[RMDB]
RNA sequence: GGGAACGACUCGAGUAGAGUCGAAAAAGGGAAGAAAAUAAUUUAGAAAGGAGAUUCCGCCCCAGCUUGCGGUGCGGCCGAAAGGCUGUAAGGCAUCCAGGAGAGGGGAGGCAAGGCGAAAGCCAAAAACGGUACACCAUCUUCGGAUGGUGUACAACCGCAUUUAGUAGUUCGCUACUAAAUGCGGAAAAGAAACAACAACAACAAC
Reactivity to 2A3 in 0.01 (KOAc 150mM, MgCl2 10mM, bicine 150mM(pH8.5), 24C), signal-to-noise 1, nucleotides 027 to 156: a000g110g040g030a030a050g100a060a100a020a080u270a120a160u150u180u250a110g020a070a080a050g050g010a060g010a070u140u020c010c030g010c000c010c010c000a020g120c030u030u060g010c080g010g000u000g000c010g020g000c010c000g070a080a030a010g020g000c020u030g070u130a080a040g100g000c010a010u010c050c020a020g040g030a050g000a050g010g000g000g010a000g020g010c070a070a000g000g000c010g050a050a020a000g060c030c050a030a090a000a000a000c070g010g010u000a000c000a000c000c000a000u020c000u010u050c010g060g000a000u000g000g040u000g000u010a000c000a000a000
The record gives the reactivity of an RNA of 207 nucleotides to 2A3. The RNA was probed in 150 mM KOAc, 10 mM MgCl2 and 150 mM bicine (pH 8.5) at 24 C. For 2A3 the reverse transcriptase was SuperScript II with manganese. High 2A3 reactivity points to a flexible backbone, as in loops and unpaired stretches.